Structure probing data (DMS) for a 177-nucleotide construct. The RNA was probed in 150 mM KOAc, 10 mM MgCl2 and 150 mM bicine (pH 8.5) at 24 C. The data come from the RNA Mapping Database (RMDB), library TTRINS. For DMS the reverse transcriptase was MarathonRT. For DMS, 3,424 sequencing reads were counted.
RNA sequence: GGGAACGACUCGAGUAGAGUCGAAAAGAUAUGGACCAUGAAAAGGUGCAGCUCCGAUGAAAUCUGCCUAUUCGGAAACGAAUAGGCAGAUGGAGGAGCUGAACUACACCCUUCAUGGUCCUAAGUCGAUGAAAGUACUGUUCGCAGUACUUUCAUCAAAAGAAACAACAACAACAAC
Reactivity to DMS in 0.01 (KOAc 150mM, MgCl2 10mM, bicine 150mM(pH8.5), 24C), signal-to-noise 2, nucleotides 027 to 126: g000a020u000a080u010g010g000a010c000c000a000u000g000a010a030a270a260g000g020u000g000c000a010g010c000u000c000c000g000a180u020g020a090a130a030u000c000u000g000c000c000u000a000u000u000c000g000g000a040a010a060c010g010a030a010u000a010g010g020c010a000g000a010u000g010g010a090g030g000a020g010c000u000g000a020a030c120u020a300c010a000c010c010c060u020u000c010a020u000g000g000u010c000c000u000a010a050g000u000c030